[RMDB]
RNA sequence: GGGAACGACUCGAGUAGAGUCGAAAAGAUUGGCGGCGCGCCGGCAUCCCGGCGCGCAGCGCGCAGUUCUCCCACCCGCUGCUUGCGGUGGCGCCGCGACGGCCACAGGGCGAGCUGCCGGCGGUCGACUAACUAUACAAUUCGUUGUAUAGUUAGUAAAAGAAACAACAACAACAAC
Reactivity to DMS in 0.01 (KOAc 150mM, MgCl2 10mM, bicine 150mM(pH8.5), 24C), signal-to-noise 6, nucleotides 027 to 126: g010a100u000u010g010g010c010g010g080c060g140c100g240c040c050g060g110c260a130u020c170c080c030g070g090c030g230c080g170c040a020g000c030g020c090g010c030a020g000u000u000c050u010c030c000c020a190c110c080c140g010c010u000g000c120u000u010g010c000g000g010u000g010g010c080g010c040c030g000c080g010a060c050g010g010c020c030a060c150a190g010g010g010c050g000a080g010c010u000g010c030c060g000g010c040g010g000u000c070g010
Reactivity to 2A3 in 0.01 (KOAc 150mM, MgCl2 10mM, bicine 150mM(pH8.5), 24C), signal-to-noise 3, nucleotides 027 to 126: g030a030u060u110g050g040c050g010g000c050g000c030g000c000c000g020g050c080a080u250c090c040c000g040g010c080g010c070g000c080a020g060c040g000c060g010c020a010g000u020u020c040u020c020c020c000a020c000c020c010g010c010u050g020c030u060u110g010c030g030g050u040g100g020c140g030c020c010g060c040g060a090c050g040g010c000c010a050c020a070g090g060g000c000g000a010g010c010u020g010c020c020g050g020c040g020g010u060c020g010
The record gives the reactivity of an RNA of 177 nucleotides to DMS and 2A3.
Conditions: 150 mM KOAc, 10 mM MgCl2 and 150 mM bicine (pH 8.5), 24 C.
High DMS reactivity at an A or C suggests that its Watson-Crick edge is free.